Structure probing data (2A3) for a 207-nucleotide construct. The 2A3 profile rests on 775 reads.

RNA sequence: GGGAACGACUCGAGUAGAGUCGAAAAAUCAUCUGAAGAUCAGCUAUUAGAAGAGAAAGAUCAGUUAAGUCCUUUGGACCUGAUCAGCUUGAUACAAGAACUACUGAUUUCACCUUCUUUGGCUUAAAAAAGGCCACAGAGUUCGCUCUGUGGCCAACUAUCAUGCGUGGUUCGCCACGCAUGAUAGAAAAGAAACAACAACAACAAC
Reactivity to 2A3 in 0.01 (KOAc 150mM, MgCl2 10mM, bicine 150mM(pH8.5), 24C), signal-to-noise 2, nucleotides 027 to 156: a000u080c010a030u020c050u150g090a060a000g040a110u090c010a010g000c020u050a090u210u040a210g020a050a000g040a000g010a060a200a000g010a010u010c020a000g000u050u120a150a010g000u060c000c030u060u170u290g060g020a050c000c000u060g020a050u030c030a020g050c020u110u140g010a030u070a170c060a010a060g020a050a040c030u120a050c010u060g020a030u020u030u070c100a080c030c000u000u040c000u050u040u030g000g010c000u040u000a010a020a020a020a090a080g000g000c030c000a000c010a000g030a000g000u070u150c200g100c090u030c010u010g000u000g000g000c000c000a000a000